The data come from the RNA Mapping Database (RMDB), library TTRDEL. Chemical mapping of a 177-nucleotide RNA with 2A3 and DMS. For DMS the reverse transcriptase was MarathonRT. Reactivities are given for positions 27 through 126. The RNA was probed in 150 mM KOAc, 10 mM MgCl2 and 150 mM bicine (pH 8.5) at 24 C.
[RMDB]
RNA sequence: GGGAACGACUCGAGUAGAGUCGAAAAGAUAUGGAACUGUGGGAGAAUUGACUCACGAAUUCGGAAACGAACUAUGAGCAAUUCGAAGAACACAGUUCCUAAGUCAAAACCGUGCUUCGGCACGGAACUUAAUGUAGAUGUUCGCAUCUACAUUAAGAAAAGAAACAACAACAACAAC
Reactivity to 2A3 in 0.01 (KOAc 150mM, MgCl2 10mM, bicine 150mM(pH8.5), 24C), signal-to-noise 9, nucleotides 027 to 126: g020a020u060a050u100g000g000a010a000c000u010g010u000g010g020g000a050g010a040a010u110u040g200a300c000u000c010a020c070g080a080a300u040u010c000g010g020a070a050a040c010g000a020a010c060u060a090u080g000a000g000c000a010a020u010u000c020g040a150a000g010a010a010c000a000c000a000g000u000u000c000c000u000a010a000g020u000c020a000a020a120a210c000c000g000u000g000c000u080u100c240g110g000c000a000c000g000g000a010a020
Reactivity to DMS in 0.01 (KOAc 150mM, MgCl2 10mM, bicine 150mM(pH8.5), 24C), signal-to-noise 8, nucleotides 027 to 126: g010a040u000a300u010g010g000a000a010c000u000g010u000g010g010g000a110g000a020a000u000u000g010a170c000u000c000a010c130g010a050a160u000u000c000g000g010a110a090a180c010g010a010a020c090u000a150u000g010a010g000c000a010a000u000u000c000g010a100a140g020a110a110c000a000c000a000g000u000u000c000c000u000a010a070g010u000c030a080a090a100a120c010c000g010u000g000c010u000u010c200g010g010c010a000c000g010g000a020a060